[RMDB]
RNA sequence: GGGAACGACUCGAGUAGAGUCGAAAAAGAGGCUCACGAGGGCCGGGCAAGCCUGUGGGGGUAGCAGGCAGUCACUCCCAUGGGGACAGGCUGACCUGGCAGGCUUAUUUCCCAUGGAAGUGGGCACGUGAGGGGUAAGUUUCGACUUACCCCUCACAAAAGAAACAACAACAACAAC
Reactivity to DMS in 0.01 (KOAc 150mM, MgCl2 10mM, bicine 150mM(pH8.5), 24C), signal-to-noise 1, nucleotides 027 to 126: a100g010a240g000g020c020u000c010a070c030g010a250g000g000g040c000c000g020g000g010c130a100a060g010c000c030u010g040u000g010g020g000g010g010u000a080g000c000a040g010g010c150a110g000u000c060a040c000u000c010c000c000a090u000g020g020g000g020a120c180a010g000g000c010u000g000a140c020c000u000g000g000c010a120g010g010c050u000u000a120u000u000u000c020c000c010a090u030g000g010a050a100g000u000g010g010g000c040a080c200
Reactivity to 2A3 in 0.01 (KOAc 150mM, MgCl2 10mM, bicine 150mM(pH8.5), 24C), signal-to-noise 1, nucleotides 027 to 126: a000g140a050g030g040c000u020c030a060c040g080a240g040g000g060c040c050g020g010g000c040a090a000g000c010c000u000g010u040g000g030g020g000g000u050a040g070c020a020g160g050c020a010g100u110c000a010c000u000c030c000c030a020u110g030g000g010g000a010c010a010g000g010c000u020g060a180c000c000u000g020g010c020a030g010g030c000u020u000a010u050u050u020c000c000c020a000u050g010g010a060a000g010u030g000g000g080c040a010c060

An RNA of 177 nucleotides, treated with DMS and 2A3 and read out base by base. For DMS the reverse transcriptase was MarathonRT. 2A3 adducts were read by reverse transcription with SuperScript II with manganese. It was measured as part of the RMDB library OK2TST.